The data come from the RNA Mapping Database (RMDB), libraries RFM100 and RFMREP. The record gives the reactivity of an RNA of 177 nucleotides to 2A3 and DMS.
[RMDB]
RNA sequence: GGGAACGACUCGAGUAGAGUCGAAAAUGACCUGAGAGGUAUGAGGCGAUACCCGUAUUGAUUGUUGAGCGAAGCCGGCUUGCCGGUGGAGUGAUGCUUUCAGAGUGGCUAGUGCACCAGACGGUAAGUCUCUAACGACGUUCGCGUCGUUAGAGACAAAAGAAACAACAACAACAAC
Reactivity to 2A3 in 0.01 (KOAc 150mM, MgCl2 10mM, bicine 150mM(pH8.5), 24C), signal-to-noise 2, nucleotides 027 to 126: u110g100a030c030c000u080g070a120g000a020g120g070u110a060u170g070a090g040g000c020g020a090u050a050c000c080c000g020u170a200u100u150g040a020u020u010g020u000u020g010a000g000c000g020a010a000g010c010c000g000g000c000u020u200g070c010c020g020g030u020g010g000a010g000u000g030a010u050g000c000u020u110u030c020a050g070a050g050u100g030g000c010u060a040g010u050g050c030a060c020c000a030g020a050c040g070g030u050a160a000
Reactivity to DMS in 0.01 (KOAc 150mM, MgCl2 10mM, bicine 150mM(pH8.5), 24C), signal-to-noise 2, nucleotides 027 to 126: u030g000a120c040c010u000g000a190g020a080g020g040u040a050u010g000a070g000g010c070g020a150u040a170c090c030c050g000u010a120u020u000g000a040u000u000g000u000u000g000a300g000c010g000a260a260g000c000c030g000g030c030u020u000g050c000c040g030g000u000g000g000a300g010u010g020a070u000g000c030u000u030u000c000a060g000a120g010u040g000g000c020u010a120g080u020g000c070a040c050c000a150g030a090c040g020g010u000a040a090